[RMDB]
RNA sequence: GGGAACGACUCGAGUAGAGUCGAAAAAGGAAUCACGCGAAGGUCGAGCAAUGUUCAAAUUGCUCCGCAAAAUUGCCGAUGAAAAUAGUGAACAUGCUGGAAUGCUAAAAAUCUCGUUAAUCGAUCCAGUCAGGAUACGAUUCGUCGUAUCCUGACUAAAAGAAACAACAACAACAAC
Reactivity to 2A3 in 0.01 (KOAc 150mM, MgCl2 10mM, bicine 150mM(pH8.5), 24C), signal-to-noise 3, nucleotides 027 to 126: a000g170g000a120a020u060c030a020c080g020c050g040a100a030g170g050u070c060g000a000g040c020a030a080u080g060u160u100c040a110a140a040u010u010g000c030u050c020c000g000c000a070a110a080a040u200u110g000c010c050g060a040u110g030a060a060a000a020u080a040g150u060g060a030a010c030a020u050g020c000u020g050g000a020a060u150g080c130u190a080a010a010a010a160u070c040u000c020g070u050u190a030a030u070c070g000a030u020c040c000
Reactivity to DMS in 0.01 (KOAc 150mM, MgCl2 10mM, bicine 150mM(pH8.5), 24C), signal-to-noise 3, nucleotides 027 to 126: a000g000g020a090a080u010c130a110c100g020c060g010a130a070g000g020u110c280g010a000g000c000a000a030u000g000u010u030c170a050a130a060u010u000g000c030u000c010c130g010c100a040a070a090a130u010u000g000c030c090g000a070u020g010a120a070a040a080u010a040g030u000g020a050a130c010a040u030g010c040u000g000g000a060a060u020g000c060u000a010a020a080a070a110u030c050u000c030g000u020u020a060a100u000c070g000a040u020c080c040